An RNA of 177 nucleotides, treated with 2A3 and DMS and read out base by base. Conditions: 150 mM KOAc, 10 mM MgCl2 and 150 mM bicine (pH 8.5), 24 C. For DMS the reverse transcriptase was MarathonRT. The data come from the RNA Mapping Database (RMDB), library M2PK50. For 2A3, 1,542 sequencing reads were counted.
[RMDB]
RNA sequence: GGGAACGACUCGAGUAGAGUCGAAAAGACCGUUAGUUCGCUAACGGUCAAAUAAAAUCAGCGGUAACGAGGCGUAAAAUAUUACCGCUGAAGGCCUCGUUAAAAACAGGAGCUUCGGCUCCUGUAACGUUUAUGUCCGAUUCGUCGGACAUAAACGAAAAGAAACAACAACAACAAC
Reactivity to 2A3 in 0.01 (KOAc 150mM, MgCl2 10mM, bicine 150mM(pH8.5), 24C), signal-to-noise 1, nucleotides 027 to 126: g000a010c000c000g000u010u010a010g000u050u030c200g030c150u000a000a000c000g010g000u000c010a000a000a000u020a020a010a000a060u010c000a000g000c010g030g010u000a010a010c050g030a100g180g010c110g180u100a000a110a050a050u170a010u050u020a000c000c000g000c010u000g000a020a010g050g000c010c000u050c030g000u070u240a180a110a010a000a000c000a000g020g000a000g000c000u070u070c200g070g020c000u010c000c000u010g000u000a000a000
Reactivity to DMS in 0.01 (KOAc 150mM, MgCl2 10mM, bicine 150mM(pH8.5), 24C), signal-to-noise 2, nucleotides 027 to 126: g000a020c000c000g010u000u000a010g000u000u000c230g020c000u000a000a000c000g000g000u000c000a010a070a040u000a100a060a090a100u000c020a020g000c000g010g030u000a000a020c140g020a150g010g050c120g000u000a060a090a100a100u000a130u000u000a020c010c000g000c010u000g000a010a050g000g000c040c020u010c160g030u000u000a070a020a100a130a010c000a000g000g010a010g010c010u000u000c170g000g010c000u000c000c000u000g000u000a000a060